[RMDB]
RNA sequence: GGGAACGACUCGAGUAGAGUCGAAAACUCUGUCCGUGACGAUGAGUUAUCCAUCCCGCCGGGAACGGGAAGCGUAGCCUGUUUCUACUCUGCUCUUAUCUGGUUCCUCUUAUCUCCUUUGGAAUUUCGGACUCGGUAUGUUCGCAUACCGAGUCCGAAAAGAAACAACAACAACAAC
Reactivity to 2A3 in 0.01 (KOAc 150mM, MgCl2 10mM, bicine 150mM(pH8.5), 24C), signal-to-noise 1, nucleotides 027 to 126: c000u020c040u030g020u000c060c130g130u070g050a040c040g000a040u130g000a000g060u000u040a060u000c000c000a000u000c010c000c000g020c050c070g050g000g000a060a000c000g000g010g040a010a020g010c000g090u090a070g010c000c000u010g080u020u010u000c020u020a020c030u000c000u080g030c040u000c000u100u140a160u080c000u120g120g030u030u060c050c010u000c000u000u010a100u080c020u060c050c020u140u130u160g010g000a050a030u050u030u000